[RMDB]
RNA sequence: GGGAACGACUCGAGUAGAGUCGAAAAUUACGAACAACGGCGGCGAACGUGCUGUAUUUGGAUGCCGAGAUCAGGUAGGUCGGGGAUCGCUGCAGCAUGGUUACCUUUUCGGCCCGGUCGGUCAGCGGUAUGAAGUGACGUUCGCGUCACUUCAUACAAAAGAAACAACAACAACAAC
Reactivity to DMS in 0.01 (KOAc 150mM, MgCl2 10mM, bicine 150mM(pH8.5), 24C), signal-to-noise 2, nucleotides 027 to 126: u000u010a120c100g020a070a090c150a060a090c130g010g010c060g010g010c000g000a030a060c020g040u000g000c010u010g030u000a070u000u000u000g010g020a030u000g000c000c010g000a130g010a040u000c020a140g000g020u020a150g010g000u010c010g020g010g020g000a060u000c020g020c120u000g010c030a030g010c030a030u000g000g000u000u000a060c050c020u000u000u000u000c050g010g000c010c030c010g000g010u010c050g000g000u000c050a080g020c180g030
Reactivity to 2A3 in 0.01 (KOAc 150mM, MgCl2 10mM, bicine 150mM(pH8.5), 24C), signal-to-noise 2, nucleotides 027 to 126: u030u010a060c010g020a110a020c050a100a020c040g120g010c010g030g000c010g040a030a010c010g030u020g000c010u030g040u040a130u040u170u200g210g010a000u060g120c010c020g120a130g000a110u040c070a050g280g110u250a060g060g000u030c040g040g030g010g050a010u020c040g000c130u010g000c010a010g000c000a000u020g000g010u040u020a030c030c000u040u060u030u040c000g020g000c000c020c050g000g010u030c010g000g050u040c020a040g110c080g110